[RMDB]
RNA sequence: GGGAACGACUCGAGUAGAGUCGAAAAUACUAUAUAGGAAGCAGACAAUUAAGUACAAAUGUCACUAUACAUACACUUAACACAACAUACAUCCAAAACAGAGACUGGGGAGACAGAAAUAAAACUAUAAUCAUUUAGCAUUCGUGCUAAAUGAUUAAAAAGAAACAACAACAACAAC
Reactivity to DMS in 0.01 (KOAc 150mM, MgCl2 10mM, bicine 150mM(pH8.5), 24C), signal-to-noise 3, nucleotides 027 to 126: u010a150c070u000a050u030a140u000a060g020g020a040a070g000c090a070g010a080c160a100a120u000u000a040a080g050u000a080c120a070a080a070u010g000u000c070a110c120u010a090u020a070c030a050u010a050c100a040c070u010u000a050a030c130a060c060a030a030c100a040u000a060c070a030u010c060c040a060a040a080a050c100a050g000a070g020a060c060u010g010g000g030g000a090g010a060c080a010g000a080a050a090u000a040a070a030a140c160u000a070
Reactivity to 2A3 in 0.01 (KOAc 150mM, MgCl2 10mM, bicine 150mM(pH8.5), 24C), signal-to-noise 2, nucleotides 027 to 126: u000a020c020u010a020u040a030u070a240g010g050a040a000g010c040a030g000a040c030a020a120u030u100a120a000g050u030a080c040a040a290a020u090g010u050c020a010c110u050a000u020a090c000a020u150a000c080a010c130u200u200a080a000c130a020c000a130a090c020a020u070a030c000a030u020c010c000a010a040a110a060c010a070g130a000g020a050c000u040g000g070g000g000a060g030a020c100a030g200a090a070a000u210a050a050a020a010c030u140a040
Structure probing data (DMS and 2A3) for a 177-nucleotide construct. The RNA was probed in 150 mM KOAc, 10 mM MgCl2 and 150 mM bicine (pH 8.5) at 24 C. For 2A3, 1,005 sequencing reads were counted.